[RMDB]
The record gives the reactivity of an RNA of 177 nucleotides to DMS and 2A3. The RNA was probed in 150 mM KOAc, 10 mM MgCl2 and 150 mM bicine (pH 8.5) at 24 C. For DMS the reverse transcriptase was MarathonRT. Reactivities are rounded to 0.1 and cut off at 0 and 3. For DMS, 4,899 sequencing reads were counted.

RNA sequence: GGGAACGACUCGAGUAGAGUCGAAAAGAAAUUACAGGUGUACAACCAAAUUCUUGUUUACGAUUGGAGCUUAGAUAAGUUGAUCGGUCUUUCAAAUUUGAAUGCGACACCUUCGGCCAAACAAUCGCAUAAAUUUAUCCUUCGGGAUAAAUUUAUGAAAAGAAACAACAACAACAAC
Reactivity to DMS in 0.01 (KOAc 150mM, MgCl2 10mM, bicine 150mM(pH8.5), 24C), signal-to-noise 3, nucleotides 027 to 126: g000a080a040a060u020u020a100c170a110g020g000u010g000u060a080c140a120a090c020c020a060a090a080u010u000c070u000u000g010u010u020u010a070c010g020a030u000u010g000g000a110g020c030u000u020a090g040a110u010a010a020g020u000u020g020a090u010c030g020g020u020c030u000u000u000c010a050a150a180u010u050u010g000a040a020u010g000c030g000a010c010a020c040c010u020u000c030g000g000c030c040a070a070a280c070a040a020u000c040g000
Reactivity to 2A3 in 0.01 (KOAc 150mM, MgCl2 10mM, bicine 150mM(pH8.5), 24C), signal-to-noise 6, nucleotides 027 to 126: g010a000a060a010u180u120a040c070a090g000g000u030g040u070a110c090a070a030c060c000a020a030a050u070u020c040u020u060g060u080u090u040a020c020g000a010u000u030g050g020a090g010c030u030u070a050g050a080u140a260a010g020u030u050g070a240u020c020g040g100u030c010u020u040u010c060a150a240a300u210u180u150g010a020a000u030g030c010g010a000c000a010c000c000u000u030c010g020g000c010c020a030a030a110c010a010a030u030c010g010